[RMDB]
Annotation:
Conditions: 150 mM KOAc, 10 mM MgCl2 and 150 mM bicine (pH 8.5), 24 C. Structure probing data (2A3) for a 207-nucleotide construct.
RNA sequence: GGGAACGACUCGAGUAGAGUCGAAAAACAGGUGUUCGCACCUGUAAAAAAUCCUAAGUCGACCUUUGAUCGUCCUGGAGCGAAGAACUAUCGGAAACGAUAGGGAGCUCCGGGACGGGAGGUCGAUAUGGAAAAAAGUUAUCUUUCGAGAUAACAACCUAGUACACUUGUUCGCAAGUGUACUAGGAAAAGAAACAACAACAACAAC
Reactivity to 2A3 in 0.01 (KOAc 150mM, MgCl2 10mM, bicine 150mM(pH8.5), 24C), signal-to-noise 2, nucleotides 027 to 156: a000c000a000g000g010u040g040u050u090c160g040c130a020c010c000u000g000u010a010a000a000a000a000a020u070c010c010u080a110a020g020u000c000g000a000c010c000u120u070u170g200a250u250c000g000u000c020c010u010g010g010a000g000c000g100a300a010g000a060a020c000u010a000u000c010g070g000a140a050a040c000g010a000u000a010g010g010g000a010g010c010u000c020c000g000g000g010a000c000g000g030g000a000g000g010u000c000g000a030u000a020u010g020g160a000a040a000a140a000a100g020u040u040a000u010c020u030u120u120c240g040a050g000a020u010a000a010c000a000a030